[RMDB]
RNA sequence: GGGAACGACUCGAGUAGAGUCGAAAAUUAGCGAAGUAUGAAAUCUCCUUCUCCAUCAAAUAACCGGCAGCACCGUGACCCAAAAUCUUUGGAAUUCCGGUCAUGGUAGCACUGUCACGGUGAGCUGCCUAUGACACCAAUUCGUUGGUGUCAUAGGAAAAGAAACAACAACAACAAC
Reactivity to DMS in 0.01 (KOAc 150mM, MgCl2 10mM, bicine 150mM(pH8.5), 24C), signal-to-noise 7, nucleotides 027 to 126: u000u030a060g010c070g000a040a080g020u020a070u030g000a050a090a090u010c040u010c010c020u000u000c020u000c010c050a070u030c120a060a070a070u040a080a080c080c040g000g000c020a020g010c150a030c010c000g020u000g000a020c020c060c030a060a070a070a060u000c060u020u030u050g020g000a070a070u020u010c240c300g000g000u010c030a040u010g000g000u010a040g000c100a120c070u000g010u010c040a060c040g000g000u010g000a110g010c070u010g000
Reactivity to 2A3 in 0.01 (KOAc 150mM, MgCl2 10mM, bicine 150mM(pH8.5), 24C), signal-to-noise 9, nucleotides 027 to 126: u120u070a020g060c030g050a070a020g080u140a070u240g100a080a100a080u050c050u030c030c000u050u040c010u000c020c010a110u100c080a060a080a130u190a090a040c020c010g010g000c010a010g010c010a010c000c000g000u000g000a000c000c000c010a040a220a060a090u080c130u110u140u130g100g070a110a060u140u020c070c030g020g010u020c020a010u050g010g000u020a010g020c040a020c060u040g020u060c070a010c120g000g010u030g020a020g020c040u040g020